[RMDB]
RNA sequence: GGGAACGACUCGAGUAGAGUCGAAAAUCCUCCCUCUCCUUCGAGGACGGGUUCGCGACGGGUUGGCUCAUCCUGAGAUCGGGGAGCCUCGACGAUCUCUUUGAUCUCCUGAAGGAGGAAGGAGCUCCUUAUUCAAAGAGUUCGCUCUUUGAAUAAGAAAAGAAACAACAACAACAAC
Reactivity to 2A3 in 0.01 (KOAc 150mM, MgCl2 10mM, bicine 150mM(pH8.5), 24C), signal-to-noise 4, nucleotides 027 to 126: u020c000c000u020c020c000c010u040c000u000c010c000u020u010c030g130a030g030g010a010c030g020g010g000u030u100c030g060c030g140a150c110g100g140g080u100u090g030g010c000u000c010a160u090c040c020u070g030a070g020a150u160c040g020g000g010g000a000g000c000c010u030c000g100a120c020g020a070u000c030u000c000u080u150u140g050a080u020c020u010c010c010u050g010a020a000g010g000a010g010g000a030a070g020g000a030g000c010u060c010
Reactivity to DMS in 0.01 (KOAc 150mM, MgCl2 10mM, bicine 150mM(pH8.5), 24C), signal-to-noise 4, nucleotides 027 to 126: u010c080c000u000c020c010c030u000c030u010c000c010u010u010c000g020a040g010g000a050c120g000g010g010u000u000c060g030c060g000a190c100g010g020g020u010u010g010g000c000u010c020a080u000c010c020u000g000a120g000a050u000c050g010g000g000g000a030g000c060c030u010c140g000a160c080g000a050u000c010u000c040u000u000u010g010a070u000c060u010c010c210u010g000a030a030g000g010a030g010g010a080a070g000g000a050g000c110u010c050